Description:
The record gives the reactivity of an RNA of 207 nucleotides to 2A3 and DMS. The data come from the RNA Mapping Database (RMDB), library OK3TST. For 2A3 the reverse transcriptase was SuperScript II with manganese. Conditions: 150 mM KOAc, 10 mM MgCl2 and 150 mM bicine (pH 8.5), 24 C.
[RMDB]
RNA sequence: GGGAACGACUCGAGUAGAGUCGAAAACGCAUGCGAAAGCAUGCGGCUAUGCUAAUGCAUGGCGAGGGGUUACAAGGUGACAUUCCCCCGUAUGUGGUUAUUAUUCCGCAUACGAUUACCAGUGUCUGUUAUUAUUCAGAUACAUGGACGUCACCAACGCUAUACGUCAGUUCGCUGACGUAUAGCGAAAAGAAACAACAACAACAAC
Reactivity to 2A3 in 0.01 (KOAc 150mM, MgCl2 10mM, bicine 150mM(pH8.5), 24C), signal-to-noise 5, nucleotides 027 to 156: c010g000c000a010u000g000c010g050a120a020a000g010c010a000u000g000c000g010g010c010u010a000u010g000c020u150a300a070u300g000c000a000u020g000g000c020g050a080g040g010g000g000u110u080a070c070a210a100g000g000u000g000a010c010a030u040u110c000c000c000c000c000g000u010a000u000g050u020g040g060u110u070a170u230u100a110u250u060c000c000g000c000a000u000a000c000g010a030u010u110a050c000c000a000g000u000g010u010c000u000g090u040u060a290u160u080a160u130u150c000a000g000a000u000a000c050a090u010g000g020a060c080g000u000c000a000c010c000a010a000
Reactivity to DMS in 0.01 (KOAc 150mM, MgCl2 10mM, bicine 150mM(pH8.5), 24C), signal-to-noise 2, nucleotides 027 to 156: c000g000c000a000u010g000c000g020a160a110a220g020c000a010u000g020c010g000g000c020u000a020u000g000c000u010a070a160u020g030c020a030u020g000g000c030g010a060g010g020g000g000u010u010a080c110a100a110g000g040u000g000a050c020a300u000u000c000c000c030c030c030g030u000a010u000g020u010g000g030u000u000a150u020u010a300u000u000c000c000g010c010a020u000a000c010g000a100u010u000a060c040c030a140g000u000g030u000c000u000g000u000u010a220u000u010a230u010u000c000a020g010a010u000a010c030a110u000g020g010a130c090g000u050c000a050c030c010a050a220